[RMDB]
RNA sequence: GGGAACGACUCGAGUAGAGUCGAAAAAGGAGGCUUCAAUGUUGCCAAACCGAUAGUUAAAGUCAUCACUGUUGACGAUCAGGUAUUUAUCAUUCGUUUUAAUGUCGUCAAUAGCCCGGCCCUGAUCGCUAAUACUGGUCUUCGGACCAGUAUUAGCAAAAGAAACAACAACAACAAC
Reactivity to 2A3 in 0.01 (KOAc 150mM, MgCl2 10mM, bicine 150mM(pH8.5), 24C), signal-to-noise 4, nucleotides 027 to 126: a000g130g010a030g000g000c010u080u080c090a100a180u250g010u130u090g070c010c020a070a030a020c050c070g010a030u070a090g080u100u110a100a060a000g060u010c010a050u060c010a160c030u000g010u030u000g000a000c010g000a000u120c080a000g080g010u130a100u170u170u080a100u140c050a090u120u180c070g150u070u020u060u230a170a190u150g040u010c000g000u010c000a040a040u000a010g000c030c000c000g000g000c000c020c030u000g010a050u070c040
Reactivity to DMS in 0.01 (KOAc 150mM, MgCl2 10mM, bicine 150mM(pH8.5), 24C), signal-to-noise 2, nucleotides 027 to 126: a160g000g010a140g040g010c030u000u020c050a130a040u010g020u070u000g000c010c030a050a120a100c240c040g000a080u000a060g010u010u010a010a070a040g020u020c000a070u000c080a210c020u000g000u000u010g000a010c010g000a020u000c080a000g000g000u000a010u010u040u020a050u010c090a030u020u070c150g010u020u070u040u030a050a070u020g000u000c000g030u000c000a040a000u000a070g000c030c000c000g010g000c020c010c000u000g000a030u030c090